Background
This 177-nucleotide RNA was probed chemically with DMS. The RNA was probed in 150 mM KOAc, 10 mM MgCl2 and 150 mM bicine (pH 8.5) at 24 C.
RNA sequence: GGGAACGACUCGAGUAGAGUCGAAAAAAGGCCGAAGACCUUCCGGCGAGAGGAAGGAAACCAGAAGAAAGGAAGGAUGAAAAUCCUGUUUCUGCUGGGAUUACUCCUGUCUCAACCAGGAAUGAUCGAACUCACCAUAGUUCGCUAUGGUGAGUUCAAAAGAAACAACAACAACAAC
Reactivity to DMS in 0.01 (KOAc 150mM, MgCl2 10mM, bicine 150mM(pH8.5), 24C), signal-to-noise 1, nucleotides 027 to 126: a160a140g010g030c010c050g010a140a090g000a060c050c010u000u000c010c000g030g000c160g020a050g020a300g010g010a030a010g000g000a070a130a170c020c020a000g000a050a010g000a010a010a100g000g020a090a020g020g010a010u000g000a130a080a070a020u000c000c000u000g000u000u000u000c000u000g050c020u010g000g000g000a050u010u010a080c000u000c000c020u000g000u030c020u020c020a070a150c160c010a040g020g000a060a050u000g000a090u010c030